The record gives the reactivity of an RNA of 177 nucleotides to DMS.
The reactions ran in a buffer of 150 mM KOAc, 10 mM MgCl2 and 150 mM bicine (pH 8.5), at 24 C.
RNA sequence: GGGAACGACUCGAGUAGAGUCGAAAACUUCUUUCAGGAACGCUCUAUGUUGAAGGGCAACGUGCUGCCACAGGCGUGAAUCUUGACAAUCUCCCUAGUUACGUUACUGUAGCAAAACCUGGAGUCAGAAAAGGCACCUAUUCGUAGGUGCCUUUUCAAAAGAAACAACAACAACAAC
Reactivity to DMS in 0.01 (KOAc 150mM, MgCl2 10mM, bicine 150mM(pH8.5), 24C), signal-to-noise 1, nucleotides 027 to 126: c100u000u010c030u000u000u010c030a020g000g000a050a130c110g010c030u010c010u000a090u000g000u000u000g010a140a050g000g000g020c020a200a100c150g000u000g050c050u010g000c020c030a070c040a030g030g050c070g010u000g000a080a080u000c070u010u000g000a050c140a050a110u020c160u000c010c030c070u000a180g020u020u010a010c050g000u000u030a140c070u000g010u000a010g050c000a060a060a110a140c020c010u010g010g000a080g020u050c230a090